[RMDB]
RNA sequence: GGGAACGACUCGAGUAGAGUCGAAAAACGACACAAUUCGUUGUGUCGUAAUGGAAAAGGCUAGGACCGGCCAGACAAAGGUCCGAAAAGAUCGAAACAUCACACGCCACGAAUUCGUUCGUGGCAAGUUAAAGAAUCUGUUCGCAGAUUCUUUAACAAAAGAAACAACAACAACAAC
Reactivity to DMS in 0.01 (KOAc 150mM, MgCl2 10mM, bicine 150mM(pH8.5), 24C), signal-to-noise 5, nucleotides 027 to 126: a040c010g010a000c000a010c010a000a030u000u010c190g020u000u000g010u000g000u010c000g000u000a020a080u000g010g000a100a080a140a140g010g010c010u000a130g000g000a010c020c000g010g010c010c010a150g000a150c220a030a060a150g000g010u000c000c000g000a050a050a080a070g010a040u010c060g000a100a070a090c130a040u000c030a080c200a090c220g010c000c000a010c010g000a020a020u000u010c200g010u000u000c000g020u000g010g000c010a010a000
Reactivity to 2A3 in 0.01 (KOAc 150mM, MgCl2 10mM, bicine 150mM(pH8.5), 24C), signal-to-noise 5, nucleotides 027 to 126: a000c000g010a000c000a000c000a040a020u100u120c160g040u090u030g000u010g010u000c000g000u010a020a070u100g020g030a040a080a110a240g010g000c010u050a060g010g000a000c000c010g000g000c010c030a030g010a020c120a030a130a000g000g000u000c000c000g000a010a020a000a000g050a030u120c090g040a070a060a040c050a040u090c020a030c020a020c160g000c000c000a000c000g010a000a010u100u070c200g060u050u010c000g000u020g000g000c000a000a000